[RMDB]
RNA sequence: GGGAACGACUCGAGUAGAGUCGAAAACCCGUUUUGUUCGCAAAACGGGACUCAUCUUUGCUUGGCAGCAUAGCAGGUGUUGGCUGGACUCCUGGCUUAUCCUUGGAGGCAGUUUCGACUGCCUCAACUACGUGAGGAAUUUCGAUUCCUCACGUAGAAAAGAAACAACAACAACAAC
Reactivity to 2A3 in 0.01 (KOAc 150mM, MgCl2 10mM, bicine 150mM(pH8.5), 24C), signal-to-noise 4, nucleotides 027 to 126: c010c000c000g000u000u000u010u010g020u020u040c210g000c100a000a000a000a010c000g010g000g030a040c010u010c030a140u020c040u050u120u110g020c020u030u070g060g040c040a020g000c010a100u070a070g010c040a030g010g030u040g030u190u130g080g030c020u030g020g030a050c020u020c020c020u030g070g000c020u080u110a090u120c010c020u020u110g150g010a000g000g010c000a000g000u000u060u110c140g080a020c010u000g000c000c000u010c000a000a010
Reactivity to DMS in 0.01 (KOAc 150mM, MgCl2 10mM, bicine 150mM(pH8.5), 24C), signal-to-noise 3, nucleotides 027 to 126: c010c000c000g010u000u000u000u000g010u010u010c210g030c010a000a000a010a000c000g000g000g000a110c060u000c050a100u010c040u000u000u010g010c030u010u010g000g000c090a050g010c060a060u000a070g000c070a050g010g010u000g010u000u000g000g000c040u000g010g000a120c040u010c030c010u000g020g000c050u000u000a080u010c040c030u000u000g020g010a020g010g000c000a010g010u000u010u020c160g010a040c000u000g010c000c000u000c000a030a120
Structure probing data (2A3 and DMS) for a 177-nucleotide construct. DMS adducts were read by reverse transcription with MarathonRT. It was measured as part of the RMDB library M2PK50. For 2A3 the reverse transcriptase was SuperScript II with manganese. For DMS, 5,769 sequencing reads were counted.